[RMDB]
RNA sequence: GGGAACGACUCGAGUAGAGUCGAAAAGCACCACGAAGCUGACCGUAGACGAGUUUGGAAUCUACAUGACCAAGAUCGAAGCGUGGGCCGCCGAGCAAGGGUGGCCGCUGAUGAUGCAGGAGGUCGCAUGAGCAAGUUCAAGGCGGGCGAUCUCGCACGAGGUGAUAUCAUUCGUGAUAUCACCUCGAAAAGAAACAACAACAACAAC
Reactivity to 2A3 in 0.01 (KOAc 150mM, MgCl2 10mM, bicine 150mM(pH8.5), 24C), signal-to-noise 3, nucleotides 027 to 156: g040c010a010c100c020a080c080g030a140a000g000c000u040g060a090c020c050g000u040a030g040a100c090g030a070g040u040u160u080g050g030a100a050u030c010u000a150c050a170u170g060a070c000c060a070a030g020a080u070c030g020a020a000g030c000g060u150g000g090g000c000c000g000c010c000g040a080g050c080a080a090g080g010g010u030g020g000c000c010g000c000u020g000a050u050g000a010u100g020c040a070g030g080a010g010g010u000c030g020c030a010u110g030a020g090c060a120a000g050u210u290c090a090a010g140g000c010g020g000g000c020g010a000u020c000u010c020g060c000a040
Reactivity to DMS in 0.01 (KOAc 150mM, MgCl2 10mM, bicine 150mM(pH8.5), 24C), signal-to-noise 2, nucleotides 027 to 156: g010c030a100c000c000a120c000g020a170a140g030c020u000g020a110c060c060g000u010a020g020a070c000g000a170g020u020u010u000g030g010a090a070u000c030u000a050c050a230u000g010a190c010c030a120a150g030a070u000c020g050a050a160g010c050g030u000g030g020g000c000c000g010c000c000g000a150g040c170a150a150g000g000g050u000g000g030c000c010g000c040u000g010a140u000g010a090u000g010c080a190g000g030a080g060g000u000c010g060c010a160u000g020a160g030c070a050a120g010u000u010c050a100a180g000g040c040g000g010g000c040g030a070u000c010u000c030g000c040a190